An RNA of 177 nucleotides, treated with 2A3 and read out base by base. 2A3 adducts were read by reverse transcription with SuperScript II with manganese.

RNA sequence: GGGAACGACUCGAGUAGAGUCGAAAAGGUACCGUCUGCGAUGGCGGCAUCAAUUGCUUUGUCGAACAGAGCUUUGAGAUCGGUAUCCUCUUUGCGGAUGCCAACGCCGACACCCUUUCCGAAUAGUACCUGACCAGUCCUUCGGGACUGGUCAGGUAAAAGAAACAACAACAACAAC
Reactivity to 2A3 in 0.01 (KOAc 150mM, MgCl2 10mM, bicine 150mM(pH8.5), 24C), signal-to-noise 1, nucleotides 027 to 126: g000g080u000a000c020c000g000u050c070u050g000c050g150a130u100g140g000c020g180g000c000a030u000c000a000a140u110u080g000c020u040u010u040g100u080c210g130a090a100c010a060g010a030g000c000u000u010u030g030a030g030a160u080c050g090g030u020a040u000c000c000u000c160u050u080u240g090c160g060g020a020u010g010c070c010a010a010c020g050c000c000g050a030c070a080c020c000c000u050u130u060c000c030g000a070a030u080a100g070u040

Description: Source: RMDB library OK1LIB, as collected in RNAgym.